[RMDB]
RNA sequence: GGGAACGACUCGAGUAGAGUCGAAAACCUCUGGGGAAUACACUACGUGACUUACCUGUAUGGUGGCAAGGGCUCGAAGAGGGAACCCCGGGCAAACCUACUCGAGCGAGGCGGAGAUCGAGCGCCACAACUAAUUUACGUUCGCGUAAAUUAGUUGAAAAGAAACAACAACAACAAC
Reactivity to DMS in 0.01 (KOAc 150mM, MgCl2 10mM, bicine 150mM(pH8.5), 24C), signal-to-noise 4, nucleotides 027 to 126: c060c010u000c070u010g060g030g010g010a150a090u010a110c060a060c050u000a100c070g010u000g010a140c060u000u000a050c020c020u010g010u010a100u020g010g010u010g010g010c030a070a070g020g000g000c020u000c020g020a060a060g000a150g010g010g010a120a130c020c010c010c030g020g000g020c070a040a080a070c030c010u000a030c010u000c010g000a040g000c010g020a050g010g020c030g000g000a120g000a090u000c060g000a070g010c030g010c020c030a190
Reactivity to 2A3 in 0.01 (KOAc 150mM, MgCl2 10mM, bicine 150mM(pH8.5), 24C), signal-to-noise 4, nucleotides 027 to 126: c000c000u030c150u110g000g010g000g020a070a060u150a130c030a020c110u120a040c060g040u030g080a070c020u080u060a060c000c010u110g110u240a190u250g150g070u040g010g000c060a090a070g050g080g010c020u020c040g080a070a040g020a100g070g010g020a040a030c000c000c000c000g020g020g010c040a100a080a020c010c000u020a000c000u000c000g010a010g000c010g000a020g020g010c010g040g040a100g030a130u170c090g060a050g090c030g000c000c000a030
Chemical mapping of a 177-nucleotide RNA with DMS and 2A3. The DMS profile rests on 3,649 reads.